Background:
This 177-nucleotide RNA was probed chemically with DMS and 2A3. High DMS reactivity at an A or C suggests that its Watson-Crick edge is free. The reactions ran in a buffer of 150 mM KOAc, 10 mM MgCl2 and 150 mM bicine (pH 8.5), at 24 C. The 2A3 profile rests on 3,841 reads. The DMS profile rests on 2,994 reads. Reactivities are given for positions 27 through 126.
[RMDB]
RNA sequence: GGGAACGACUCGAGUAGAGUCGAAAAGAUAUGGAGGCAGCUGCAACUAUUAGUUCGGAAACGAACUAACGAAUUGCAGAACUACUGCGCUCCUAAGUCAAAACCCGGCCUCUUCGGAGGCCGGGAACUAUGUAGUUUAGUUCGCUAAACUACAUAGAAAAGAAACAACAACAACAAC
Reactivity to DMS in 0.01 (KOAc 150mM, MgCl2 10mM, bicine 150mM(pH8.5), 24C), signal-to-noise 3, nucleotides 027 to 126: g000a050u010a300u010g000g020a020g010g020c000a010g000c010u000g000c000a010a020c070u000a230u000u000a000g000u000u000c010g010g000a090a130a210c000g000a010a010c000u000a000a010c060g020a020a110u000u000g010c000a010g000a070a020c050u020a300c010u000g000c000g030c000u000c000c000u000a030a100g010u000c040a110a080a160a160c000c000c000g030g000c000c000u000c020u000u030c200g020g000a020g000g010c020c000g000g000g000a010a030
Reactivity to 2A3 in 0.01 (KOAc 150mM, MgCl2 10mM, bicine 150mM(pH8.5), 24C), signal-to-noise 2, nucleotides 027 to 126: g020a040u090a070u150g000g000a010g000g000c010a010g010c000u020g010c000a020a010c000u050a030u070u020a000g000u000u030c000g010g030a050a080a050c000g000a000a000c000u000a000a000c020g150a220a300u040u000g000c000a000g000a030a000c030u210a040c000u020g000c180g230c030u000c010c000u000a120a020g060u030c030a060a010a080a150c000c020c000g020g010c010c000u090c050u090u140c300g130g000a010g000g000c030c030g000g000g000a010a000